Source: RMDB library M2RFPK, as collected in RNAgym.
The record gives the reactivity of an RNA of 207 nucleotides to 2A3 and DMS.
For DMS the reverse transcriptase was MarathonRT.
Conditions: 150 mM KOAc, 10 mM MgCl2 and 150 mM bicine (pH 8.5), 24 C.
RNA sequence: GGGAACGACUCGAGUAGAGUCGAAAAGUUAUGCUCUCGCUGCCUAAUGGCGGUGCGGGAAACCCACUCUAAAGUCCUUAGGGUUAGCCCCUUAAGGCGGGGAUCGGAGGCACCUGGCAACAGAAGCUGAAACUGUGCACAUUCGUGUGCACAGUAAGUAUGGAUGUGAAUUCGUUCACAUCCAUACAAAAGAAACAACAACAACAAC
Reactivity to 2A3 in 0.01 (KOAc 150mM, MgCl2 10mM, bicine 150mM(pH8.5), 24C), signal-to-noise 4, nucleotides 027 to 156: g100u130u100a120u300g030c010u010c010u000c020g010c020u020g000c010c010u300a300a220u220g020g000c060g070g030u040g020c020g000g000g000a060a030a040c010c020c000a050c030u140c080u150a130a080a150g240u070c000c010u000u000a010g010g000g000u000u070a020g040c000c020c000c040u010u050a010a000g000g000c000g000g010g000g000a060u100c070g050g000a040g020g060c010a050c020c030u040g140g000c010a020a000c010a100g040a070a000g010c020u050g050a170a010a000c000u000g010u000g000c000a000c000a010u040u080c190g130u010g010u000g040c000a000c000a000g000u000a010a000
Reactivity to DMS in 0.01 (KOAc 150mM, MgCl2 10mM, bicine 150mM(pH8.5), 24C), signal-to-noise 1, nucleotides 027 to 156: g000u000u010a060u000g000c020u010c030u000c070g010c010u000g030c000c010u010a130a150u020g020g020c030g040g040u000g010c050g000g000g000a070a020a120c000c000c000a080c050u000c060u040a050a060a150g010u020c000c010u000u000a060g000g020g010u000u000a150g000c230c260c000c000u000u000a030a040g000g060c000g030g010g000g000a080u000c010g000g000a130g030g010c000a060c010c020u000g010g000c080a080a150c040a080g020a120a110g000c020u010g000a150a080a040c000u010g020u000g020c000a020c020a060u000u010c300g010u010g040u000g000c000a000c010a000g010u000a000a090